[RMDB]
RNA sequence: GGGAACGACUCGAGUAGAGUCGAAAAGAGCAGCCGGUGGACGGCUUUGCCGCCGGGAAUCCGCAUCGCCCAGCGGACGGCUGUGGGCAGUGGAACGUCGAAUUUGGGGAAACACCAAAUAGGGGUGUCAAACGACAGGUUUCGACCUGUCGUUUGAAAAAGAAACAACAACAACAAC
Reactivity to DMS in 0.01 (KOAc 150mM, MgCl2 10mM, bicine 150mM(pH8.5), 24C), signal-to-noise 1, nucleotides 027 to 126: g000a160g020c020a060g000c010c000g020g020u000g000g010a100c040g020g000c080u000u000u020g030c130c040g040c000c010g030g000g000a160a150u010c020c040g010c040a040u020c110g000c000c020c050a210g000c000g010g000a030c030g000g000c020u000g040u000g000g000g010c070a040g000u000g000g000a110a110c080g000u000c090g010a070a060u000u000u010g020g000g000g020a130a120a110c070a080c030c010a020a030a080u000a100g020g020g010g020u010g000
Chemical mapping of a 177-nucleotide RNA with DMS.
For DMS the reverse transcriptase was MarathonRT.
For DMS, 1,007 sequencing reads were counted.